[RMDB]
RNA sequence: GGGAACGACUCGAGUAGAGUCGAAAAGAUAUGGAUGAUGACCGAUCUACCCACCUACACCAUCGGAAACGAUGGCUGUAGAGGAUCGCAAGUCCUAAGUCAAAAGGAUAGCCUUCGGGCUAUCCAACACUUACUAAUACUUCGGUAUUAGUAAGUGAAAAGAAACAACAACAACAAC
Reactivity to DMS in 0.01 (KOAc 150mM, MgCl2 10mM, bicine 150mM(pH8.5), 24C), signal-to-noise 9, nucleotides 027 to 126: g010a020u000a070u010g000g000a010u000g010a050u010g010a080c300c010g000a010u000c010u000a070c040c060c130a300c060c000u000a000c010a030c000c000a010u000c000g000g000a030a020a050c010g000a010u000g000g000c300u000g010u000a000g010a100g000g000a010u000c010g000c020a030a110g010u000c000c000u000a020a130g000u010c020a080a070a110a150g000g010a010u000a000g010c000c000u000u010c210g020g000g010c000u000a000u000c000c000a050a100
Reactivity to 2A3 in 0.01 (KOAc 150mM, MgCl2 10mM, bicine 150mM(pH8.5), 24C), signal-to-noise 9, nucleotides 027 to 126: g030a010u040a030u100g010g010a010u030g030a050u060g020a030c040c020g000a010u000c010u080a160c070c070c040a050c020c000u000a000c000a010c000c000a010u000c000g020g000a010a030a010c000g010a000u000g010g000c000u000g000u000a000g000a000g000g000a000u000c010g000c100a300a300g010u000c000c010u030a040a010g030u030c030a040a040a100a210g010g000a000u010a000g000c010c010u040u150c300g090g000g000c000u000a000u000c000c000a000a000